[RMDB]
RNA sequence: GGGAACGACUCGAGUAGAGUCGAAAAGGAUAAGGUCCUGAACAGAUGCCCUCCGGGCGUCCACGGCUGACGGUUGAUUCCUCCUCCUGACUGAGUGCACAAGGCCCGCUUGGUUGAUUCGGAUACCAAGCAUACCAUGAUUCGUCAUGGUAUGCUUAAAAGAAACAACAACAACAAC
Reactivity to DMS in 0.01 (KOAc 150mM, MgCl2 10mM, bicine 150mM(pH8.5), 24C), signal-to-noise 7, nucleotides 027 to 126: g020g000a080u020a100a130g030g000u000c010c030u020g010a100a090c200a140g000a070u010g000c020c000c000u030c130c120g010g030g010c040g010u000c010c070a100c090g010g000c020u000g020a110c110g010g000u010u010g000a190u010u000c010c010u000c030c050u000c020c020u000g010a090c040u000g010a070g020u000g000c060a070c050a060a100g010g000c020c020c020g010c060u010u000g000g020u010u000g000a090u010u000c050g010g010a130u020a090c140c110
Reactivity to 2A3 in 0.01 (KOAc 150mM, MgCl2 10mM, bicine 150mM(pH8.5), 24C), signal-to-noise 5, nucleotides 027 to 126: g080g000a050u120a090a100g060g070u030c000c010u010g010a050a030c060a060g050a040u080g010c000c000c020u080c070c110g020g020g000c020g010u010c040c030a030c030g030g000c030u040g030a030c020g020g040u070u060g070a150u090u060c000c000u020c000c010u000c000c000u030g010a030c020u030g030a010g050u050g020c030a020c020a120a050g040g020c000c010c000g020c020u020u040g050g010u020u050g040a150u060u070c050g050g040a020u030a090c010c050